[RMDB]
RNA sequence: GGGAACGACUCGAGUAGAGUCGAAAACAGGGCAGCGACUACCUAUGCAGGUGUCAUCCGGGUUACACUGGAAAGUGGUGCGAGUACCUCACCAGCAUAAGCUUUGUCCACAACAACUCGUUUGUAGUAGCUGAAUCAACUUCGGUUGAUUCAGCUAAAAAGAAACAACAACAACAAC
Reactivity to DMS in 0.01 (KOAc 150mM, MgCl2 10mM, bicine 150mM(pH8.5), 24C), signal-to-noise 1, nucleotides 027 to 126: c090a080g040g050g000c040a060g000c110g060a100c040u000a120c040c090u000a020u000g020c040a040g010g000u000g010u000c140a220u000c010c000g000g000g000u000u010a100c140a060c000u000g000g010a040a080a090g020u010g000g010u000g030c040g010a090g030u000a110c010c000u000c000a040c020c010a100g000c040a040u000a010a050g030c020u000u000u000g000u000c050c040a050c140a070a100c070a080a030c120u000c080g000u000u000u000g000u000a070g030
Reactivity to 2A3 in 0.01 (KOAc 150mM, MgCl2 10mM, bicine 150mM(pH8.5), 24C), signal-to-noise 1, nucleotides 027 to 126: c050a070g000g000g000c000a040g000c000g090a100c090u070a070c060c010u040a030u110g030c050a000g010g000u000g040u080c050a080u030c000c000g000g000g000u040u050a040c060a020c100u040g000g050a080a080a100g140u090g070g000u070g030c080g090a090g030u040a040c000c030u000c000a020c000c010a010g000c000a010u030a060a050g000c050u100u090u110g010u020c010c010a040c000a100a020c000a000a030c060u060c140g050u040u020u170g070u100a170g060
Source: RMDB library OK2TRN, as collected in RNAgym.
An RNA of 177 nucleotides, treated with DMS and 2A3 and read out base by base.
Reactivities are given for positions 27 through 126.
Conditions: 150 mM KOAc, 10 mM MgCl2 and 150 mM bicine (pH 8.5), 24 C.